Structure probing data (2A3 and DMS) for a 177-nucleotide construct. The RNA was probed in 150 mM KOAc, 10 mM MgCl2 and 150 mM bicine (pH 8.5) at 24 C. The 2A3 profile rests on 27,118 reads. Source: RMDB library OK2TRN, as collected in RNAgym.
RNA sequence: GGGAACGACUCGAGUAGAGUCGAAAAUAUUGAAUCAUUUUCAACAUCAACAAGAAUUGCUUUCAUACCUUGUGAUUUUAACGCAUUAAGUUGAUCUGAUUGCCUAACACCAGCAGUAAAUGGUACAAGUAGAUACAGAAUUCGUUCUGUAUCUACUAAAAGAAACAACAACAACAAC
Reactivity to 2A3 in 0.01 (KOAc 150mM, MgCl2 10mM, bicine 150mM(pH8.5), 24C), signal-to-noise 9, nucleotides 027 to 126: u140a020u030u130g030a010a030u040c050a050u040u060u070u080c020a030a030c010a060u040c010a010a050c010a030a050g090a190a090u110u080g020c020u060u110u080c030a040u080a190c030c030u090u130g050u040g080a120u050u090u070u190a080a040c070g010c030a010u050u040a100a020g020u010u010g020a010u000c020u040g040a080u030u100g030c010c010u040a100a010c040a030c020c010a010g040c010a010g050u160a010a090a090u060g020g000u040a050c010a040
Reactivity to DMS in 0.01 (KOAc 150mM, MgCl2 10mM, bicine 150mM(pH8.5), 24C), signal-to-noise 9, nucleotides 027 to 126: u010a100u010u000g010a110a050u020c070a040u000u000u000u000c030a050a080c170a050u000c040a050a030c030a060a150g010a080a050u000u000g010c050u000u000u000c050a040u000a110c150c130u010u010g020u000g000a070u010u000u010u000a050a090c230g010c040a030u000u010a040a210g010u000u000g000a020u000c080u000g000a050u010u000g010c020c030u000a060a090c110a060c030c020a090g010c060a060g010u010a040a040a040u000g000g010u000a070c160a080